Source: RMDB library OK3TST, as collected in RNAgym. Structure probing data (DMS and 2A3) for a 207-nucleotide construct. Values cover nucleotides 27 to 156.
RNA sequence: GGGAACGACUCGAGUAGAGUCGAAAAUUCAGGAAUAUGUCCUCUCCCCCAAGUUACAAUCACUAUUUGUGCCUAAUUGUGUACUUUGGGAGCCGGCAGGUUAGUCAUGACAUAGUUACCGGCUACUAAACAAUGAAUAAUACUCUGGCCCGCGAGACAUUACCACGUAGUUCGCUACGUGGUAAUGAAAAGAAACAACAACAACAAC
Reactivity to DMS in 0.01 (KOAc 150mM, MgCl2 10mM, bicine 150mM(pH8.5), 24C), signal-to-noise 1, nucleotides 027 to 156: u000u000c060a080g030g000a080a140u010a050u010g010u020c010c020u010c020u010c020c010c010c030c020a040a270g020u000u020a020c050a060a060u010c050a070c010u010a150u000u010u030g040u010g000c290c020u010a060a070u010u020g020u000g030u000a040c050u000u010u020g010g000g010a050g000c060c020g020g100c020a090g020g050u000u010a040g000u010c100a080u000g050a150c150a130u000a080g010u000u010a060c020c080g010g000c000u000a050c010u010a050a030a090c140a150a070u000g010a100a050u000a070a050u000a040c040u010c040u000g000g000c050c010c000g010c060g020a100g000a270
Reactivity to 2A3 in 0.01 (KOAc 150mM, MgCl2 10mM, bicine 150mM(pH8.5), 24C), signal-to-noise 2, nucleotides 027 to 156: u070u050c070a000g000g080a120a040u090a170u240g090u020c020c020u040c080u080c040c010c000c020c030a000a000g000u000u010a020c040a020a030u080c030a020c040u120a110u300u090u270g010u050g020c020c030u090a110a030u000u000g000u010g010u070a040c030u010u030u060g000g030g000a020g020c020c030g030g000c050a060g000g120u060u040a030g080u110c040a040u120g010a060c030a110u120a020g000u030u060a130c020c050g030g020c010u000a030c020u060a030a060a040c120a050a030u000g000a020a030u150a070a030u080a110c020u080c010u030g000g060c010c010c030g000c030g010a050g000a020